RNA sequence: GGGAACGACUCGAGUAGAGUCGAAAAUGCUGUCGUUGACAGCGCCCAACGCUUCACAACCUGAAAGAAGCGCCUGUUAUCAGGACGGUUGAUCCAUUUACCGGUGCAGACCUCUGCAAGCACCGGGUUUAACAAGCAUCUUUCGAGAUGCUUGUAACCUUAUACGCUCUUUCGAGAGCGUAUAAGGAAAAGAAACAACAACAACAAC
Reactivity to DMS in 0.01 (KOAc 150mM, MgCl2 10mM, bicine 150mM(pH8.5), 24C), signal-to-noise 2, nucleotides 027 to 156: u010g050c000u000g010u010c000g030u000u010g030a050c010a020g030c020g000c060c020c000a110a080c030g000c000u000u000c020a190c060a070a170c090c030u020g010a110a230a270g000a030a030g050c000g000c000c030u000g010u000u000a130u000c050a070g020g020a110c070g000g030u020u000g020a250u010c080c050a230u010u010u020a070c000c000g040g020u000g060c000a210g000a140c130c080u010c130u000g050c040a210a260g010c020a010c000c000g000g040g000u000u010u010a090a080c000a020a000g010c000a000u010c000u000u010u010c300g030a030g030a000u010g000c010u000u010g000u000a030a070
Reactivity to 2A3 in 0.01 (KOAc 150mM, MgCl2 10mM, bicine 150mM(pH8.5), 24C), signal-to-noise 5, nucleotides 027 to 156: u130g000c000u010g020u030c070g300u080u290g000a000c000a000g010c000g020c000c010c000a020a020c020g000c000u010u000c020a030c010a090a020c010c000u000g000a010a010a010g000a000a000g000c010g040c000c000u120g040u230u150a160u300c030a010g020g010a010c020g000g030u010u000g020a060u060c040c030a090u070u110u130a050c000c010g010g000u000g000c020a040g090a300c030c090u150c150u200g070c110a070a030g000c000a000c000c000g000g000g000u040u120u030a030a000c000a000a000g000c000a000u000c000u030u100u070c130g110a020g000a010u000g000c000u000u000g000u000a000a000
An RNA of 207 nucleotides, treated with DMS and 2A3 and read out base by base. The reactions ran in a buffer of 150 mM KOAc, 10 mM MgCl2 and 150 mM bicine (pH 8.5), at 24 C. Reactivities are rounded to 0.1 and cut off at 0 and 3. The data come from the RNA Mapping Database (RMDB), library M2RFPK.